[RMDB]
RNA sequence: GGGAACGACUCGAGUAGAGUCGAAAAUAAAAGCGCGAAAUAGAUCGAUCGAUCGUUUGAACGCGCAAGUCUAAGUUUGAUACGGGCAUACUAGCUAGCUAGCUAGCAAAACAAACUUAGUAAAAAACAAUACAUUCAUGUUCGCAUGAAUGUAUUGAAAAGAAACAACAACAACAAC
Reactivity to 2A3 in 0.01 (KOAc 150mM, MgCl2 10mM, bicine 150mM(pH8.5), 24C), signal-to-noise 5, nucleotides 027 to 126: u110a000a060a020a010g000c010g000c010g040a030a040a020u120a100g010a010u010c030g060a100u150c160g000a010u010c020g050u040u090u140g070a120a020c000g000c000g000c000a000a000g010u000c000u010a000a020g000u000u010u010g110a110u120a130c070g060g060g000c060a040u080a140c020u010a010g000c000u010a020g110c030u050a010g000c000u020a010g000c040a010a060a030a020c000a010a000a000c000u000u010a000g030u060a030a140a010a000a010a010
Reactivity to DMS in 0.01 (KOAc 150mM, MgCl2 10mM, bicine 150mM(pH8.5), 24C), signal-to-noise 8, nucleotides 027 to 126: u010a080a080a100a130g010c000g030c010g020a050a050a040u000a130g010a010u000c000g020a170u010c230g000a010u000c000g010u010u000u000g010a090a190c020g010c000g010c010a060a050g010u000c000u000a000a000g000u000u000u000g010a100u010a120c220g000g020g010c130a150u010a110c010u000a010g000c000u000a160g020c170u000a050g010c010u000a020g000c040a030a060a070a100c010a000a010a000c000u000u000a000g010u010a000a040a070a070a050a060
An RNA of 177 nucleotides, treated with 2A3 and DMS and read out base by base. For 2A3, 12,838 sequencing reads were counted. Conditions: 150 mM KOAc, 10 mM MgCl2 and 150 mM bicine (pH 8.5), 24 C.